[RMDB]
RNA sequence: GGGAACGACUCGAGUAGAGUCGAAAAGAUAUGGAAACUGCGCGACCAGAAGCGAGGAUCUUCCGUAACAUCUAGUCGGAAACGACUAGUGGGAAGGGAGCUUACUGGUCGCGCAGUUUCCUAAGUCCAGAAGACAAGAGUUCGCUCUUGUCUUCUGAAAAGAAACAACAACAACAAC
Reactivity to DMS in 0.01 (KOAc 150mM, MgCl2 10mM, bicine 150mM(pH8.5), 24C), signal-to-noise 2, nucleotides 027 to 126: g000a110u000a300u000g000g000a010a020a010c020u000g010c010g000c000g020a020c000c010a000g000a110a010g010c010g030a070g020g000a050u000c010u000u000c000c000g010u010a040a150c230a020u010c010u000a000g000u010c000g000g010a110a150a220c010g020a000c000u000a010g040u010g010g010g000a010a000g000g010g010a040g010c010u000u000a080c010u000g000g010u000c000g010c000g000c000a000g000u000u000u000c000c000u010a010a080g010u010c040